[RMDB]
An RNA of 177 nucleotides, treated with 2A3 and DMS and read out base by base. The reactions ran in a buffer of 150 mM KOAc, 10 mM MgCl2 and 150 mM bicine (pH 8.5), at 24 C. It was measured as part of the RMDB library OK1LIB.

RNA sequence: GGGAACGACUCGAGUAGAGUCGAAAACUCAUAUCCUCAUGCAGCAAACACAGCAGCUGUUGUUGUGCUUCGCAAGUGCAACCAUGGGUCAACAGCAGACUUUCCAACACCAACGCACGGCUGGGGGCAGGGGUCGAUAAUUCGUUAUCGACCCCUGAAAAGAAACAACAACAACAAC
Reactivity to 2A3 in 0.01 (KOAc 150mM, MgCl2 10mM, bicine 150mM(pH8.5), 24C), signal-to-noise 3, nucleotides 027 to 126: c010u010c000a030u040a070u190c030c010u020c010a040u130g020c020a000g010c020a010a090a050c040a010c010a060g070c010a020g030c030u010g020u030u000g020u010u010g030u060g020c030u030u050c040g060c090a060a060g020u010g080c030a070a070c060c020a120u120g030g030g070u040c040a020a010c020a040g000c000a030g010a160c050u090u110u080c020c010a060a060c010a040c040c020a090a050c030g000c030a000c030g060g000c010u030g040g000g000g000g000
Reactivity to DMS in 0.01 (KOAc 150mM, MgCl2 10mM, bicine 150mM(pH8.5), 24C), signal-to-noise 1, nucleotides 027 to 126: c030u020c010a130u020a000u040c030c000u000c000a000u020g030c020a060g000c120a100a010a050c050a080c060a090g040c080a170g000c050u020g000u000u000g000u020u020g010u010g020c060u030u000c120g010c060a030a040g000u030g010c010a070a090c060c090a010u000g010g010g010u040c110a040a070c070a020g040c100a090g010a040c060u000u000u010c040c020a140a020c080a080c010c050a080a160c050g000c080a110c020g010g000c020u000g000g000g000g000g000